[RMDB]
RNA sequence: GGGAACGACUCGAGUAGAGUCGAAAAUUUGAGCUCUUUAGAGGGCAACACAAAGGGCUGGGUUGCCUUGAUUAAAAAUGGCAGUUAACUGGGAGAGAUUUAUUCAGUUCAAUUUAAAUGGUGGUUAGAUAUAUAUCUUGUUCGCAAGAUAUAUAUCAAAAGAAACAACAACAACAAC
Reactivity to DMS in 0.01 (KOAc 150mM, MgCl2 10mM, bicine 150mM(pH8.5), 24C), signal-to-noise 5, nucleotides 027 to 126: u000u010u000g010a150g000c010u000c040u000u000u010a140g010a080g020g000g010c030a040a050c080a060c070a040a100a110g000g010g020c110u010g000g010g000u010u000g010c010c010u000u010g000a100u000u010a020a080a060a070a060u000g000g000c020a050g000u000u010a050a070c110u000g010g000g010a100g000a110g010a090u000u000u000a040u010u000c060a060g010u010u000c080a050a050u000u000u000a050a070a090u010g010g000u000g000g000u000u000a080
Reactivity to 2A3 in 0.01 (KOAc 150mM, MgCl2 10mM, bicine 150mM(pH8.5), 24C), signal-to-noise 4, nucleotides 027 to 126: u070u010u080g030a020g010c000u000c000u090u150u120a220g060a050g100g020g000c000a060a020c030a000c020a040a080a030g050g050g000c060u050g020g050g010u010u030g010c000c000u030u040g070a110u080u200a000a000a070a050a070u080g020g000c020a030g040u110u070a060a060c050u040g000g040g000a070g010a000g010a060u030u140u120a090u150u090c000a010g050u030u070c010a040a060u040u150u300a090a140a040u070g030g010u050g020g020u050u040a020